[RMDB]
Source: RMDB library OK1LIB, as collected in RNAgym. The record gives the reactivity of an RNA of 177 nucleotides to 2A3 and DMS. Reactivities are given for positions 27 through 126. Reactivities are rounded to 0.1 and cut off at 0 and 3. For 2A3 the reverse transcriptase was SuperScript II with manganese. The RNA was probed in 150 mM KOAc, 10 mM MgCl2 and 150 mM bicine (pH 8.5) at 24 C.
RNA sequence: GGGAACGACUCGAGUAGAGUCGAAAACACCGACGAUGACUAUAGCGUGUUGCUUUCGCCGGAAUUUAAACAAUUCUUCAGCCAGUACAGUAUCGCCGUCGGUUCAACCGGCAAUCUGGGGCUAUCGGCCUAAAUUACGUUUCGACGUAAUUUAGGCAAAAGAAACAACAACAACAAC
Reactivity to 2A3 in 0.01 (KOAc 150mM, MgCl2 10mM, bicine 150mM(pH8.5), 24C), signal-to-noise 5, nucleotides 027 to 126: c090a020c000c000g050a050c020g030a070u100g040a070c080u110a100u160a120g080c060g060u060g090u050u200g010c010u020u120u120c030g000c010c010g040g050a050a080u060u050u120a240a220a050c060a040a040u070u040c020u090u060c040a000g000c000c000a030g040u070a050c020a060g060u070a080u170c030g010c030c010g010u040c030g010g000u040u030c010a050a060c000c000g010g000c000a020a030u030c030u060g000g000g080g000c010u040a060u250c090g050
Reactivity to DMS in 0.01 (KOAc 150mM, MgCl2 10mM, bicine 150mM(pH8.5), 24C), signal-to-noise 3, nucleotides 027 to 126: c120a150c030c010g010a010c000g000a040u000g010a050c260u010a110u020a030g010c050g040u010g040u010u010g010c100u020u010u000c090g000c050c040g000g000a040a020u000u010u030a120a070a100c240a030a040u000u010c000u000u030c140a120g020c000c040a080g010u030a080c140a030g020u010a050u010c020g020c040c050g000u010c050g000g010u010u010c220a100a190c040c000g000g000c110a060a030u010c020u000g030g000g000g020c010u010a060u010c190g000